[RMDB]
RNA sequence: GGGAACGACUCGAGUAGAGUCGAAAAGAUAUGGAGGAAUCGAGGUGUGGGGCACCGAUGAAAUUGGCUCGGAAACGAGCCAAUGGAGGUGUUCUUUGUACACCUAAGACAGUUCCUCCUAAGUCAAAACUAGUCCUCUCUUCGGAGAGGACUAGAACCUAUAGUUAUGGUUCGCCAUAACUAUAGGAAAAGAAACAACAACAACAAC
Reactivity to 2A3 in 0.01 (KOAc 150mM, MgCl2 10mM, bicine 150mM(pH8.5), 24C), signal-to-noise 2, nucleotides 027 to 156: g030a020u060a040u140g000g000a000g010g000a020a020u110c060g030a050g000g010u010g010u020g000g010g000g000c000a010c020c010g220a300u040g000a000a010a000u000u000g000g000c010u000c010g010g010a080a070a030c000g000a000g090c020c010a010a000u000g020g000a010g000g000u000g000u070u040c020u070u060u100g070u050a000c000a000c010c010u000a050a010g050a030c060a030g010u000u000c000c000u000c000c000u000a040a000g010u000c030a020a010a090a160c000u000a000g000u000c000c000u000c000u000c010u030u070c270g010g000a000g000a000g000g000a000c000u010a000g000a000a000
Reactivity to DMS in 0.01 (KOAc 150mM, MgCl2 10mM, bicine 150mM(pH8.5), 24C), signal-to-noise 2, nucleotides 027 to 156: g010a080u020a160u010g010g010a060g040g030a070a010u000c120g020a040g020g030u010g080u000g010g010g010g020c020a010c010c010g010a140u000g000a070a120a020u000u000g010g010c020u000c000g020g020a120a070a200c010g000a020g020c000c010a000a020u000g000g000a090g010g040u000g000u010u000c030u000u010u000g050u020a090c020a030c010c000u000a080a110g020a180c300a110g010u000u000c010c010u000c010c000u000a000a090g020u000c030a080a090a140a150c000u010a010g000u000c000c010u000c000u000c000u010u000c300g060g000a020g010a020g010g000a000c010u000a010g000a020a140